RNA sequence: GGGAACGACUCGAGUAGAGUCGAAAACCAGAUGAAGGUCCUGCCAUGAGACCGCAACGAGAGCAUGUCGCAUCGAAUGGACUCGGGGAGUCGGCAGCUUGCCCCACGGAUGAGCGCCUAAUGCCGGAAGAGACGUGCAACUUCGGUUGCACGUCAAACAUUACCGAGACUUCGGUCUCGGUAAUGUAAAAGAAACAACAACAACAAC
Reactivity to 2A3 in 0.01 (KOAc 150mM, MgCl2 10mM, bicine 150mM(pH8.5), 24C), signal-to-noise 2, nucleotides 027 to 156: c030c000a020g050a130u240g060a140a020g010g060u060c040c000u030g080c030c010a100u110g020a040g000a100c020c100g010c040a000a070c090g090a020g000a040g100c030a060u100g060u070c040g010c060a040u040c080g050a020a060u080g020g040a020c030u010c140g000g000g010g020a030g080u100c000g010g000c030a030g040c010u070u130g070c000c000c050c000a030c030g040g000a110u100g020a030g030c000g010c000c020u110a110a020u120g020c020c020g000g010a030a030g110a010g000a040c000g000u020g050c000a000a000c000u030u040c150g120g000u020u010g000c000a020c000g010u000c000a000a000
Reactivity to DMS in 0.01 (KOAc 150mM, MgCl2 10mM, bicine 150mM(pH8.5), 24C), signal-to-noise 1, nucleotides 027 to 156: c000c010a190g020a100u010g030a080a100g010g000u000c010c030u000g060c090c090a100u030g010a100g020a070c010c110g000c090a050a130c070g050a130g010a250g030c030a060u000g000u000c000g050c050a070u010c040g000a120a300u000g010g000a060c030u000c060g010g010g030g000a110g000u000c050g020g030c000a070g000c020u000u010g000c030c010c020c090a150c080g010g000a070u020g010a140g040c000g020c010c010u140a050a050u010g010c010c030g000g020a150a190g000a210g010a030c000g040u000g030c020a000a010c000u030u010c300g050g050u000u000g000c000a000c000g000u000c000a000a020

An RNA of 207 nucleotides, treated with 2A3 and DMS and read out base by base. For DMS, 1,934 sequencing reads were counted. The data come from the RNA Mapping Database (RMDB), library M2RFPK. 2A3 adducts were read by reverse transcription with SuperScript II with manganese. The 2A3 profile rests on 1,201 reads.